Chemical mapping of a 207-nucleotide RNA with 2A3 and DMS.
It was measured as part of the RMDB library M2RFPK.
The DMS profile rests on 1,709 reads.
Values cover nucleotides 27 to 156.
The RNA was probed in 150 mM KOAc, 10 mM MgCl2 and 150 mM bicine (pH 8.5) at 24 C.
The 2A3 profile rests on 1,611 reads.
RNA sequence: GGGAACGACUCGAGUAGAGUCGAAAACGACCUUAAACAGUUCUGGUGGUGCUCUGAAUGCAGUGCUCUACUGAGAUUAUAAAAUAGAAGGUAAGCUAUUAUCUCUUACAACAGGGCAGGGCUUGUUAAAAGCCUUUCAGUUUCGACUGAAAGGCAACUCGUAUAAGGAGUUCGCUCCUUAUACGAGAAAAGAAACAACAACAACAAC
Reactivity to 2A3 in 0.01 (KOAc 150mM, MgCl2 10mM, bicine 150mM(pH8.5), 24C), signal-to-noise 3, nucleotides 027 to 156: c050g050a060c000c000u090u210a140a140a020c030a070g020u040u050c020u100g050g010u040g010g030u060g010c020u000c020u070g100a150a080u110g040c010a020g040u010g040c000u040c040u060a060c040u050g020a010g000a030u080u070a050u180a170a090a030a020u060a030g050a080a030g070g040u090a050a010g040c010u010a020u080u010a040u070c040u010c020u030u120a050c030a120a060c010a090g050g010g020c000a010g000g070g000c020u030u050g040u010u050a060a140a020a050g000c000c000u000u000u000c020a010g000u030u050u130c140g080a020c000u000g000a000a000a000g000g000c000a000a000
Reactivity to DMS in 0.01 (KOAc 150mM, MgCl2 10mM, bicine 150mM(pH8.5), 24C), signal-to-noise 1, nucleotides 027 to 156: c060g020a300c030c020u000u010a120a150a180c090a060g000u020u000c020u010g060g030u000g020g000u040g040c010u010c020u010g000a100a160u000g000c010a050g050u000g030c030u000c000u000a100c040u020g000a150g000a090u000u010a160u000a090a090a080a120u000a100g010a090a020g020g030u000a010a080g010c090u000a110u000u000a020u010c030u000c050u000u000a050c080a080a120c120a050g010g000g000c040a050g000g030g000c040u020u010g020u000u000a060a020a030a200g010c000c000u010u000u000c000a010g020u000u000u030c250g000a060c010u000g000a010a030a030g020g050c010a010a050